[RMDB]
Conditions: 150 mM KOAc, 10 mM MgCl2 and 150 mM bicine (pH 8.5), 24 C. Chemical mapping of a 177-nucleotide RNA with DMS and 2A3. It was measured as part of the RMDB library OK2TST. For DMS the reverse transcriptase was MarathonRT.

RNA sequence: GGGAACGACUCGAGUAGAGUCGAAAAUGAUGGUACUGUUGGGUAGCCGUAAUACAGACGUUCAGAAGCUUGCGUUGGACGCACUUCUUGCAUACAAAAAUCCAACGUUGAAUAAAUAUAGAGAUAAAGGAUAGGUAUAGUUCGCUAUACCUAUCCUAAAAGAAACAACAACAACAAC
Reactivity to DMS in 0.01 (KOAc 150mM, MgCl2 10mM, bicine 150mM(pH8.5), 24C), signal-to-noise 5, nucleotides 027 to 126: u000g000a090u020g010g010u000a050c050u000g020u020u000g010g000g010u000a070g010c100c080g010u000a070a070u010a120c140a110g000a080c080g020u000u010c090a040g000a060a050g010c080u010u000g020c020g010u000u000g020g020a300c050g020c020a040c140u000u000c080u010u000g020c040a080u000a090c150a030a070a100a080a080u000c010c000a000a010c020g000u000u000g010a100a070u020a060a050a070u000a110u010a130g010a140g000a110u000a060a110
Reactivity to 2A3 in 0.01 (KOAc 150mM, MgCl2 10mM, bicine 150mM(pH8.5), 24C), signal-to-noise 3, nucleotides 027 to 126: u050g030a000u100g030g050u060a040c040u040g030u090u020g040g010g000u040a060g040c000c020g050u010a040a010u120a040c030a020g130a050c050g010u010u060c050a010g010a090a010g060c130u140u080g000c010g040u050u130g120g060a010c000g030c030a020c030u040u020c000u030u100g010c030a050u100a210c030a020a070a050a010a010u000c010c000a000a000c010g020u060u080g030a050a030u090a210a130a020u290a030u130a130g020a010g020a080u100a160a190